Structure probing data (DMS and 2A3) for a 177-nucleotide construct. The reactions ran in a buffer of 150 mM KOAc, 10 mM MgCl2 and 150 mM bicine (pH 8.5), at 24 C. For DMS the reverse transcriptase was MarathonRT. Reactivities are given for positions 27 through 126. 2A3 adducts were read by reverse transcription with SuperScript II with manganese.
RNA sequence: GGGAACGACUCGAGUAGAGUCGAAAAUGUCCAAGUCAAGGAGCGACGCAAGCCAUUAUGCUGUUGAUGUAAGUCUGGAAAUUUACUUAAAGUCAUUAUCCAGAGACGAAGCUGAAGAACAAAUAUCUAUCUACGUUCCAUUCGUGGAACGUAGAUAAAAAGAAACAACAACAACAAC
Reactivity to DMS in 0.01 (KOAc 150mM, MgCl2 10mM, bicine 150mM(pH8.5), 24C), signal-to-noise 3, nucleotides 027 to 126: u010g030u020c020c010a060a100g030u010c060a090a090g000g000a060g020c040g000a080c070g030c070a060a090g000c060c070a050u000u010a050u010g010c050u000g030u000u000g000a080u000g000u010a040a110g010u000c010u000g000g000a030a070a050u000u000u000a030c040u000u010a080a080a070g000u010c300a010u000u000a110u010c000c010a010g000a060g000a070c070g000a090a050g030c070u000g000a070a080g000a060a050c100a050a040a090u000a090u010c060
Reactivity to 2A3 in 0.01 (KOAc 150mM, MgCl2 10mM, bicine 150mM(pH8.5), 24C), signal-to-noise 2, nucleotides 027 to 126: u110g040u000c000c000a010a000g060u040c060a000a100g070g000a070g080c050g030a030c010g000c060a040a050g060c030c030a100u110u110a070u100g030c040u060g030u150u040g010a010u040g100u150a020a070g090u000c010u030g000g010a120a130a030u110u130u050a070c020u090u140a210a050a070g000u010c010a000u010u020a060u100c000c000a010g020a010g000a040c010g020a040a000g000c060u090g060a070a010g060a060a080c030a090a100a080u110a040u080c030